[RMDB]
RNA sequence: GGGAACGACUCGAGUAGAGUCGAAAACGUACAGACCAUUAAAGCAGUGUAGUAAGGCAAGUCCCUUCAAGAGUUAUCGUUGAUACCCCUCGUAGUGCACAUUCCUUUAACGCUUCAAAAUCUGUAACGGUACGGACAGGUUCGCCUGUCCGUACCGAAAAGAAACAACAACAACAAC
Reactivity to 2A3 in 0.01 (KOAc 150mM, MgCl2 10mM, bicine 150mM(pH8.5), 24C), signal-to-noise 2, nucleotides 027 to 126: c060g050u020a010c020a010g030a010c020c030a130u190u130a060a010a100g000c070a100g010u040g000u120a030g010u020a130a080g020g020c080a020a050g080u030c000c000c000u010u130c110a130a010g030a010g040u070u050a040u180c090g000u060u080g000a000u000a020c000c000c030c000u030c030g120u060a040g000u000g040c000a000c000a110u050u070c000c000u110u000u100a090a020c010g010c060u010u010c100a000a000a000a110u010c010u040g010u020a090a000